[RMDB]
RNA sequence: GGGAACGACUCGAGUAGAGUCGAAAAGAUAUGGACGGUGCAAGAGCGAUAAGCUAGAGUUCGGAAACGAACUGUAGCUUUUGACGCUCGACCACCGUCCUAAGUCAAAGGUCCGUUCGCGGACCAAGGAGUUAUACUUGUUCGCAAGUAUAACUCCAAAAGAAACAACAACAACAAC
Reactivity to DMS in 0.01 (KOAc 150mM, MgCl2 10mM, bicine 150mM(pH8.5), 24C), signal-to-noise 7, nucleotides 027 to 126: g000a060u000a300u010g000g010a020c000g010g000u010g030c030a040a300g010a010g030c010g010a130u000a020a040g020c000u010a000g000a010g010u000u000c000g020g000a110a100a230c000g000a010a010c000u000g000u000a000g000c000u000u000u000u000g010a200c100g020c010u010c010g000a300c300c010a010c010c000g020u010c000c000u000a010a100g010u000c050a100a100a160g000g000u000c000c000g020u000u010c260g020c020g010g000a020c000c010a030a060
Reactivity to 2A3 in 0.01 (KOAc 150mM, MgCl2 10mM, bicine 150mM(pH8.5), 24C), signal-to-noise 4, nucleotides 027 to 126: g020a000u070a010u150g000g000a000c010g010g010u000g000c010a070a030g000a000g020c020g040a050u020a090a000g010c000u010a010g020a000g270u010u010c020g050g020a070a100a050c010g020a000a000c010u030g260u060a000g000c000u030u010u010u060g080a040c030g000c000u000c010g000a010c000c000a000c000c000g000u000c000c000u000a000a000g000u000c010a020a050a120g000g000u000c050c000g020u040u060c300g010c010g100g000a000c000c000a010a050

An RNA of 177 nucleotides, treated with DMS and 2A3 and read out base by base.
The 2A3 profile rests on 19,650 reads.
Conditions: 150 mM KOAc, 10 mM MgCl2 and 150 mM bicine (pH 8.5), 24 C.
2A3 adducts were read by reverse transcription with SuperScript II with manganese.